[RMDB]
Structure probing data (DMS) for a 177-nucleotide construct.
The RNA was probed in 150 mM KOAc, 10 mM MgCl2 and 150 mM bicine (pH 8.5) at 24 C.

RNA sequence: GGGAACGACUCGAGUAGAGUCGAAAAUGUUGGUGUAUAGCAGAGCUACUGAUUUAUGUACAUUAAUUUUGUAUCCUGAAACUUUGCUUAAUUCAUUUACCAGUUCUAGGACCUUUAUGAGUGAGUCAAUCUCUAGCGGAUUCGUCCGCUAGAGAUUAAAAGAAACAACAACAACAAC
Reactivity to DMS in 0.01 (KOAc 150mM, MgCl2 10mM, bicine 150mM(pH8.5), 24C), signal-to-noise 1, nucleotides 027 to 126: u000g000u010u000g000g010u000g030u000a050u000a060g010c030a030g000a220g030c160u010a080c060u000g000a160u010u000u020a040u040g010u000a000c000a030u000u000a040a080u010u000u010u000g000u010a090u000c030c050u000g010a130a100a100c040u000u000u000g010c030u000u010a100a120u000u000c030a020u010u010u010a090c040c110a070g010u020u000c080u000a120g030g010a040c040c030u000u000u000a030u000g020a090g050u000g000a030g010u010c140